[RMDB]
RNA sequence: GGGAACGACUCGAGUAGAGUCGAAAACGACAGCUUUUCGAAGCUGUCGAUUGGGAAAGGCUAGGACCGGCCAGACAAAGGUCCGAUAGCAAAUCGUAACGAAGCUCGCCUGCUUCGGCAGGCGAAACGGAAUGAGGUGGUUCGCCACCUCAUUCCGAAAAGAAACAACAACAACAAC
Reactivity to DMS in 0.01 (KOAc 150mM, MgCl2 10mM, bicine 150mM(pH8.5), 24C), signal-to-noise 1, nucleotides 027 to 126: c020g010a000c000a000g000c000u010u000u000u010c190g030a000a010g030c000u000g000u000c010g000a010u000u010g040g020g000a160a080a140g000g000c010u020a100g000g000a000c020c040g000g040c050c090a100g000a090c170a030a100a150g010g020u000c000c030g020a110u010a050g000c090a040a050a060u000c080g000u010a060a110c080g000a050a090g010c140u000c000g060c010c000u000g000c030u000u050c250g050g090c000a000g000g030c000g010a010a040a050